[RMDB]
Chemical mapping of a 177-nucleotide RNA with 2A3.

RNA sequence: GGGAACGACUCGAGUAGAGUCGAAAAGCCACGCUCUACGGAGCGUGGCAACUGUGAAGCGCGAAAACACAGAAAACAAACGGCAACGCGCGUAUCGCCGAAACUAGCCGGCUACGGCCGGCUAGAACCUCCACGUAAAUUUCGAUUUACGUGGAGGAAAAGAAACAACAACAACAAC
Reactivity to 2A3 in 0.01 (KOAc 150mM, MgCl2 10mM, bicine 150mM(pH8.5), 24C), signal-to-noise 2, nucleotides 027 to 126: g080c010c000a020c000g020c010u000c000u050a100c290g160g000a000g000c000g000u020g000g000c000a000a000c000u030g000u000g040a100a010g080c020g000c010g040a100a100a160a070c020a000c030a000g160a120a060a020a010c060a030a110a040c040g040g000c040a090a030c060g010c000g030c010g050u120a090u200c160g030c000c030g020a030a000a060c040u010a000g000c000c000g010g010c070u060a050c300g040g000c000c000g010g000c030u000a000g000a000a000
Reactivities are given for positions 27 through 126.
It was measured as part of the RMDB library OK1LIB.